[RMDB]
RNA sequence: GGGAACGACUCGAGUAGAGUCGAAAAGUCCUUUCCUGGUUUUGGUAUUAGGGUAAUGAUGUUUUCAUAGAAUGAUUUAGGGAGGAUUCCAUCUUUAUCUUUUGCAAUAGUUUCAGUAGGAUUGGUACUGUUACGAUGUGUUCGCACAUCGUAACAGAAAAGAAACAACAACAACAAC
Reactivity to DMS in 0.01 (KOAc 150mM, MgCl2 10mM, bicine 150mM(pH8.5), 24C), signal-to-noise 1, nucleotides 027 to 126: g000u010c030c010u000u000u000c040c010u030g010g000u000u000u000u000g010g010u010a050u010u010a030g000g000g020u020a030a030u000g010a030u000g000u010u000u000u010c040a090u010a090g010a120a180u000g020a110u010u000u010a030g000g000g010a130g020g010a060u010u000c080c030a030u020c030u000u000u000a010u010c020u000u000u000u010g020c050a060a080u010a070g000u000u000u000c050a080g010u020a030g000g010a040u000u000g010g020u010a050
Reactivity to 2A3 in 0.01 (KOAc 150mM, MgCl2 10mM, bicine 150mM(pH8.5), 24C), signal-to-noise 1, nucleotides 027 to 126: g000u030c000c000u000u040u010c000c000u080g120g080u000u080u040u100g050g000u130a110u060u050a090g020g000g060u000a010a000u040g050a020u010g020u040u080u000u070c100a070u100a150g120a190a130u130g110a140u180u200u200a050g070g040g000a040g040g030a020u040u030c010c000a000u000c000u030u080u010a030u000c000u040u070u060u110g000c010a090a130u020a140g130u070u120u050c070a080g030u020a020g050g030a080u010u080g000g000u050a080